[RMDB]
RNA sequence: GGGAACGACUCGAGUAGAGUCGAAAAGCUGAGUUCCGGGCUGUUGAAAGCCUGCUGACGCUUGGUUCUGUUAUCAGUGGAAUGAGGUGACUUUCCCGGAGUUGUGCAAUCCUCAGGUCCGGCAGUGAUAUUUGUCCGUGUUCGCACGGACAAAUAUAAAAGAAACAACAACAACAAC
Reactivity to DMS in 0.01 (KOAc 150mM, MgCl2 10mM, bicine 150mM(pH8.5), 24C), signal-to-noise 1, nucleotides 027 to 126: g000c020u000g000a170g010u010u010c050c020g040g030g010c020u000g020u000u000g010a140a230a110g010c020c020u010g010c100u000g000a100c200g010c060u000u020g010g020u010u000c050u010g010u000u030a070u010c060a070g020u010g010g010a050a060u000g010a100g000g010u000g000a060c080u000u000u000c020c000c040g020g010a090g020u000u000g000u000g030c130a080a150u000c040c010u000c050a050g010g010u000c010c080g010g010c050a040g000u000g000